Source information:
The record gives the reactivity of an RNA of 177 nucleotides to DMS and 2A3. For DMS the reverse transcriptase was MarathonRT. The RNA was probed in 150 mM KOAc, 10 mM MgCl2 and 150 mM bicine (pH 8.5) at 24 C. The data come from the RNA Mapping Database (RMDB), libraries RFM100 and RFMREP.
[RMDB]
RNA sequence: GGGAACGACUCGAGUAGAGUCGAAAAGAGGAAGCCGAUGUUCCGUCGUACGUUUUGAAAAACGAACCAGGGAGUGUGUCUGAUUGGCGAGUCUAACCUGAUUAUCAGGGAAGGCGUAGGGAAACCGGUUGAUAAAUCUUUUCGAAGAUUUAUCAACAAAAGAAACAACAACAACAAC
Reactivity to DMS in 0.01 (KOAc 150mM, MgCl2 10mM, bicine 150mM(pH8.5), 24C), signal-to-noise 9, nucleotides 027 to 126: g000a100g000g010a090a100g010c030c030g010a060u010g010u010u000c010c020g010u010c220g010u010a070c040g010u000u000u000u020g020a090a080a060a060a030c040g000a090a070c050c080a100g000g010g010a060g020u020g010u010g010u010c050u010g000a090u010u010g010g000c040g000a100g020u000c010u010a060a230c000c010u010g010a200u030u030a120u020c010a020g000g000g010a250a060g000g000c020g020u030a090g010g000g000a060a100a110c060c070g010
Reactivity to 2A3 in 0.01 (KOAc 150mM, MgCl2 10mM, bicine 150mM(pH8.5), 24C), signal-to-noise 9, nucleotides 027 to 126: g110a010g040g060a070a000g020c010c010g020a050u040g040u060u010c030c010g070u030c040g010u040a040c020g010u000u020u070u160g180a140a090a010a010a000c010g020a020a020c020c010a040g020g020g010a050g030u110g010u020g030u040c050u080g060a130u070u060g010g000c020g000a020g000u000c010u020a060a080c000c000u010g020a130u120u230a120u300c010a010g000g010g010a020a040g010g000c020g010u070a040g000g030g020a020a040a030c020c010g030